[RMDB]
RNA sequence: GGGAACGACUCGAGUAGAGUCGAAAAUAGUGUAAUUGAAAUUUCGUCAAGUUUGUAAACUGGUUAGGCAAGUGUUGUAUUUUCUGUGUCUAAGCACUGGUGAUUCUGUUCACUAGUGCAUACAUUGACUGAAUGGGCAAUUCGUUGCCCAUUCAGUAAAAGAAACAACAACAACAAC
Reactivity to DMS in 0.01 (KOAc 150mM, MgCl2 10mM, bicine 150mM(pH8.5), 24C), signal-to-noise 1, nucleotides 027 to 126: u040a090g010u010g010u020a050a040u000u010g000a070a050a100u000u010u000c070g000u000c070a060a100g000u010u000u010g000u040a060a060a060c020u000g010g000u020u010a040g000g040c080a070a030g020u000g010u000u000g000u000a070u000u010u000u000c020u000g030u010g000u020c200u020a080a100g010c000a010c000u000g000g010u000g010a020u000u030c260u020g010u010u000c000a030c010u010a000g020u000g040c000a030u000a020c100a020u000u000g010
Reactivity to 2A3 in 0.01 (KOAc 150mM, MgCl2 10mM, bicine 150mM(pH8.5), 24C), signal-to-noise 2, nucleotides 027 to 126: u170a030g070u050g000u040a000a040u010u060g210a050a040a150u060u020u000c050g050u020c070a020a020g000u050u130u130g160u180a000a110a000c000u000g030g040u000u050a020g020g000c050a190a150g000u000g000u000u080g050u050a240u000u000u000u060c100u060g050u000g010u000c050u110a100a100g040c000a000c000u010g000g000u030g000a000u220u000c050u300g160u030u000c000a000c000u000a000g000u000g000c000a000u000a000c020a000u000u050g020
Chemical mapping of a 177-nucleotide RNA with DMS and 2A3. Reactivities are given for positions 27 through 126. The reactions ran in a buffer of 150 mM KOAc, 10 mM MgCl2 and 150 mM bicine (pH 8.5), at 24 C. Source: RMDB libraries RFM100 and RFMREP, as collected in RNAgym.